This 177-nucleotide RNA was probed chemically with 2A3 and DMS.

RNA sequence: GGGAACGACUCGAGUAGAGUCGAAAAACGGUGCAGGUCUACGGACCUGCACCGAAGUUGUUAGUCUACGUGGACCGACAAAGACAGAUUCUUUGAGGGAGCUAAGCUCAACGUAGUUCUAACAGAAGUAUAGGCUUAGAUUCGUCUAAGCCUAUACAAAAGAAACAACAACAACAAC
Reactivity to 2A3 in 0.01 (KOAc 150mM, MgCl2 10mM, bicine 150mM(pH8.5), 24C), signal-to-noise 8, nucleotides 027 to 126: a010c020g010g010u000g000c010a010g020g010u020c030u070a100c300g090g000a000c000c000u000g010c000a010c000c000g000a000a000g000u010u020g000u000u000a000g000u010c000u000a010c010g020u080g060g140a110c040c000g110a240c040a000a020a000g010a030c150a110g210a230u240u020c010u010u010u010g010a020g010g040g000a020g010c060u220a230a050g020c010u040c020a010a000c010g000u000a000g020u080u020c000u000a000a010c000a010g050a080a000
Reactivity to DMS in 0.01 (KOAc 150mM, MgCl2 10mM, bicine 150mM(pH8.5), 24C), signal-to-noise 7, nucleotides 027 to 126: a120c020g030g010u000g010c010a010g030g030u010c000u010a150c220g030g000a020c010c010u000g000c010a000c010c000g000a010a020g010u020u000g010u000u000a010g000u010c000u000a000c010g000u000g000g020a300c020c020g000a080c040a010a000a010g020a060c220a180g020a190u020u000c000u000u000u000g000a300g000g000g010a020g010c020u040a090a160g010c010u010c010a140a010c000g010u000a010g000u020u010c000u000a000a010c010a050g010a090a120
Source: RMDB libraries RFM100 and RFMREP, as collected in RNAgym. Values are in units of 0.01, from 0 to 300, in steps of 10. For DMS the reverse transcriptase was MarathonRT. DMS (dimethyl sulfate) methylates the pairing face of unpaired adenines and cytosines. As a SHAPE reagent, 2A3 marks flexible, mostly unpaired nucleotides at the ribose 2'-OH. For 2A3 the reverse transcriptase was SuperScript II with manganese.